Record summary:
Chemical mapping of a 177-nucleotide RNA with DMS and 2A3. Source: RMDB libraries RFM100 and RFMREP, as collected in RNAgym. The RNA was probed in 150 mM KOAc, 10 mM MgCl2 and 150 mM bicine (pH 8.5) at 24 C.
[RMDB]
RNA sequence: GGGAACGACUCGAGUAGAGUCGAAAAUAGGGGAGCCUAACAGGGGGUUACGGGAAUAUCCUGAGGAAACUCCAGCCUCCAAGCCUCAUGGGAGCAGUUAGAUCUGCAGGGUUAGUGCUCUGGCUACAGACUGAGAUUACUUCGGUAAUCUCAGUCUAAAAGAAACAACAACAACAAC
Reactivity to DMS in 0.01 (KOAc 150mM, MgCl2 10mM, bicine 150mM(pH8.5), 24C), signal-to-noise 3, nucleotides 027 to 126: u030a060g000g000g010g000a050g000c060c010u000a050a030c000a160g030g000g020g030g000u000u010a080c240g000g000g000a060a060u050a160u020c050c020u070g000a110g010g000a070a120a120c100u010c020c150a110g000c040c000u000c000c000a180a040g000c040c000u010c130a130u020g000g010g000a210g000c000a000g000u020u010a100g040a100u020c000u000g000c020a280g010g000g030u000u000a030g000u030g000c010u000c000u000g000g000c050u050a050c190
Reactivity to 2A3 in 0.01 (KOAc 150mM, MgCl2 10mM, bicine 150mM(pH8.5), 24C), signal-to-noise 3, nucleotides 027 to 126: u300a040g030g000g000g010a000g020c030c000u030a040a000c040a020g000g050g000g010g010u050u080a100c070g030g000g040a100a100u120a080u240c010c030u110g030a120g030g050a090a020a000c030u000c020c010a000g000c010c000u000c000c000a060a060g040c010c000u120c040a120u160g010g020g030a070g030c020a000g000u060u130a050g050a300u130c000u030g010c000a040g050g020g000u030u020a010g010u040g110c000u000c040u040g090g030c020u030a030c020